[RMDB]
RNA sequence: GGGAACGACUCGAGUAGAGUCGAAAAUAUUGUGUUUCUGUGUGCUGUACUGAUGUAUUUGUGUUUACCUACAUUUUCUAUGGCACCUGUUGAAUUUUAUGAAGACCGCAUCUUGGACUUUAAAGUUAUAGAGAAUGGUUCGCCAUUCUCAAAAGAAACAACAACAACAAC
Reactivity to DMS in 0.01 (KOAc 150mM, MgCl2 10mM, bicine 150mM(pH8.5), 24C), signal-to-noise 5, nucleotides 027 to 129: u050a170u010u000g000u010g030u030u020u050c030u020g020u010g010u000g030c030u000g030u010a010c130u030g010a060u020g010u040a040u000u010u020g030u030g030u040u030u030a010c140c150u000a050c050a050u030u040u020u030c180u050a040u030g000g000c040a060c050c060u010g040u000u000g020a060a050u010u000u000u000a000u020g030a070a030g020a050c080c050g050c170a150u020c160u000u000g000g000a060c040u020u040u040a040a050a060g000u000u000a080u000a140
Reactivity to 2A3 in 0.01 (KOAc 150mM, MgCl2 10mM, bicine 150mM(pH8.5), 24C), signal-to-noise 6, nucleotides 027 to 129: u240a010u040u140g000u000g000u020u010u030c050u020g100u020g000u020g060c010u010g000u010a020c020u020g000a020u010g040u030a090u050u150u110g140u040g040u080u160u120a050c020c010u000a030c000a030u050u050u020u030c050u020a040u010g020g000c000a000c000c020u000g000u070u070g080a080a100u040u030u080u090a150u120g040a010a010g040a070c010c000g020c010a060u040c060u080u120g020g010a040c040u050u000u050a080a120a010g030u020u020a070u050a070

Chemical mapping of a 170-nucleotide RNA with DMS and 2A3. For DMS the reverse transcriptase was MarathonRT. For DMS, 26,726 sequencing reads were counted. Reactivities are given for positions 27 through 129. The data come from the RNA Mapping Database (RMDB), library 15KLIB. The RNA was probed in 150 mM KOAc, 10 mM MgCl2 and 150 mM bicine (pH 8.5) at 24 C.